Description: Chemical mapping of a 207-nucleotide RNA with DMS and 2A3. The DMS profile rests on 2,164 reads.

[RMDB]
RNA sequence: GGGAACGACUCGAGUAGAGUCGAAAAGCUACCAGCAUCCUGGGGUGUCCGGCUCACAGACAGCCUGUCACAGGACUUCUCAGCCUCCAUAAUCACGGAGGUAAUCCUGUUGAUUCUCUCUCUGCAGAACCCUGACGAAUUCACUGAGCAAACUCUAGUAUAAAUCCAGGUUCGCCUGGAUUUAUACAAAAGAAACAACAACAACAAC
Reactivity to DMS in 0.01 (KOAc 150mM, MgCl2 10mM, bicine 150mM(pH8.5), 24C), signal-to-noise 1, nucleotides 027 to 156: g000c000u000a100c030c040a090g040c060a110u010c030c000u010g000g000g000g010u000g020u000c060c060g010g010c000u020c010a130c060a090g030a100c040a090g050c040c030u000g030u000c040a050c030a020g010g000a010c010u000u010c070u000c070a090g030c000c000u000c010c010a130u000a120a140u020c180a130c120g020g010a060g040g010u000a000a040u000c010c000u000g000u000u000g000a090u000u000c000u000c010u000c060u010c030u000g030c010a190g000a060a060c010c010c040u000g070a100c060g010a120a070u000u010c040a070c040u000g010a120g010c000a120a100a100c040u000c010u000a300
Reactivity to 2A3 in 0.01 (KOAc 150mM, MgCl2 10mM, bicine 150mM(pH8.5), 24C), signal-to-noise 5, nucleotides 027 to 156: g020c020u120a100c070c010a020g030c010a050u080c020c040u030g020g000g000g010u030g050u040c040c040g050g010c010u010c010a070c010a030g100a040c010a020g050c010c040u040g000u020c010a010c020a020g010g030a020c020u240u050c080u120c110a030g010c000c000u030c000c010a080u180a290a120u280c070a040c170g010g000a010g000g010u020a010a020u020c000c000u020g040u100u110g050a080u140u000c000u000c000u000c000u000c030u060g000c010a050g010a120a070c020c010c000u030g050a040c050g050a030a050u130u100c020a030c120u100g020a020g080c020a100a030a040c030u090c020u180a050